[RMDB]
The record gives the reactivity of an RNA of 207 nucleotides to 2A3 and DMS. It was measured as part of the RMDB library M2RFPK. For DMS the reverse transcriptase was MarathonRT. 2A3 adducts were read by reverse transcription with SuperScript II with manganese.

RNA sequence: GGGAACGACUCGAGUAGAGUCGAAAAACAGUACCAGCUGCUACGGCAGCUGGUACUGAACUUUCAUGGAGUUAAGAAACCACGUAAACUAAGCGGAACCGAAAAGCUAAACGAGUAGGAAGAAUAAAUAGGUACCACCACUUCGGUGGUGGUACAACGAUUUAGUUACGUUCGCGUAACUAAAUCGAAAAGAAACAACAACAACAAC
Reactivity to 2A3 in 0.01 (KOAc 150mM, MgCl2 10mM, bicine 150mM(pH8.5), 24C), signal-to-noise 3, nucleotides 027 to 156: a000c000a000g000u000a020c010c000a010g060c000u010g000c010u030a070c220g120g000c010a000g030c020u000g000g000u000a000c000u000g000a000a000c000u010u080u080c020a050u080g080g020a030g040u070u080a110a050g040a090a080a020c010c040a040c040g040u090a020a120a100c050u010a110a000g000c000g040g010a080a050c020c000g010a010a000a000a010g030c080u120a130a000a060c000g000a010g010u010a000g110g050a040a000g070a020a090u220a140a070a060u170a090g130g000u000a000c000c000a000c000c010a010c020u050u040c230g080g000u000g000g000u010g000g000u000a000c000a000a000
Reactivity to DMS in 0.01 (KOAc 150mM, MgCl2 10mM, bicine 150mM(pH8.5), 24C), signal-to-noise 1, nucleotides 027 to 156: a130c010a010g040u010a020c000c020a000g060c010u000g020c010u010a100c300g130g000c090a000g070c000u000g010g010u000a000c010u010g020a020a030c020u010u000u010c040a100u000g030g000a140g000u010u000a040a140g000a180a110a150c020c000a050c060g000u010a060a060a150c130u000a050a100g000c030g010g030a010a160c030c020g000a040a050a100a050g000c040u000a050a050a080c030g000a040g030u000a080g010g030a090a100g000a090a140u000a010a030a150u000a090g010g020u000a030c000c000a020c000c010a010c010u020u000c240g040g020u000g020g040u010g010g030u000a010c010a030a060

As a SHAPE reagent, 2A3 marks flexible, mostly unpaired nucleotides at the ribose 2'-OH.